About this RNA: Chemical mapping of a 177-nucleotide RNA with DMS and 2A3. Values are in units of 0.01, from 0 to 300, in steps of 10. The RNA was probed in 150 mM KOAc, 10 mM MgCl2 and 150 mM bicine (pH 8.5) at 24 C. DMS adducts were read by reverse transcription with MarathonRT. Source: RMDB library OK2TST, as collected in RNAgym. For DMS, 9,047 sequencing reads were counted.

[RMDB]
RNA sequence: GGGAACGACUCGAGUAGAGUCGAAAAAGAUGCGCUGCGCAACGGUAAGCCGGUGCCGGCCGCGGCUGACGCGAAGCCACGUGGCCUGGAGGGUGACUGGCGCGCCGCCAAGGAGAAGGGCGAGGGCGGAUGUAAUGACAUUCGUGUCAUUACAUCCAAAAGAAACAACAACAACAAC
Reactivity to DMS in 0.01 (KOAc 150mM, MgCl2 10mM, bicine 150mM(pH8.5), 24C), signal-to-noise 6, nucleotides 027 to 126: a080g010a110u000g020c090g020c040u000g010c080g010c040a070a180c040g000g010u010a070a210g020c020c010g020g020u000g000c010c030g000g000c020c020g030c040g010g000c060u000g020a090c110g020c130g010a120a100g000c020c020a070c070g030u010g010g010c020c020u010g020g000a100g010g010g020u010g000a040c040u000g000g000c140g010c090g000c030c040g000c020c040a070a130g000g000a080g010a070a050g000g000g010c070g010a100g010g010g010c170
Reactivity to 2A3 in 0.01 (KOAc 150mM, MgCl2 10mM, bicine 150mM(pH8.5), 24C), signal-to-noise 5, nucleotides 027 to 126: a000g100a050u100g010c030g010c050u050g010c010g000c050a040a050c030g050g020u100a100a040g040c030c010g080g090u100g040c020c010g010g010c010c000g010c010g010g000c020u040g040a070c060g030c080g250a060a010g010c020c020a080c090g020u030g010g000c000c060u090g060g070a100g060g050g030u080g100a040c020u010g000g000c010g000c010g010c010c010g000c000c010a020a030g080g030a080g010a060a070g050g010g010c050g020a050g030g000g010c060